[RMDB]
The record gives the reactivity of an RNA of 177 nucleotides to DMS and 2A3.
RNA sequence: GGGAACGACUCGAGUAGAGUCGAAAAAAUGGCUUGCAGGCGUUACCACCGUUGACGGCAAGGAAGGCCUGCCUGCCGUCAGAUCGGCCCUCGGCCUCUGAUCCUGAAUAUCAACAGGGUCGCGGGAGCCAUUAUCGACUUUCGAGUCGAUAAUGGCAAAAGAAACAACAACAACAAC
Reactivity to DMS in 0.01 (KOAc 150mM, MgCl2 10mM, bicine 150mM(pH8.5), 24C), signal-to-noise 2, nucleotides 027 to 126: a090a030u000g000g010c000u000u000g030c050a060g000g010c050g000u010u010a060c050c030a100c000c010g010u010u020g000a080c040g010g010c010a040a120g000g010a070a030g020g030c040c000u030g020c000c000u000g000c000c010g020u010c040a040g010a240u010c020g010g000c000c010c030u010c060g020g030c010c010u010c090u010g010a020u000c040c030u000g040a120a090u000a090u010c240a170a100c020a020g010g000g000u000c010g000c300g000g010g000a150
Reactivity to 2A3 in 0.01 (KOAc 150mM, MgCl2 10mM, bicine 150mM(pH8.5), 24C), signal-to-noise 2, nucleotides 027 to 126: a020a000u100g030g020c010u020u030g000c030a020g010g000c020g250u000u020a070c000c040a070c020c010g010u040u150g220a140c020g010g020c060a140a130g020g000a030a020g120g030c010c000u010g040c000c000u000g020c020c000g000u000c000a010g020a140u080c010g060g000c010c000c010u020c020g050g000c000c000u000c030u120g000a040u030c020c000u030g100a060a060u210a060u250c030a010a080c020a020g000g030g000u000c010g000c030g000g030g010a020
The DMS profile rests on 1,637 reads. Conditions: 150 mM KOAc, 10 mM MgCl2 and 150 mM bicine (pH 8.5), 24 C.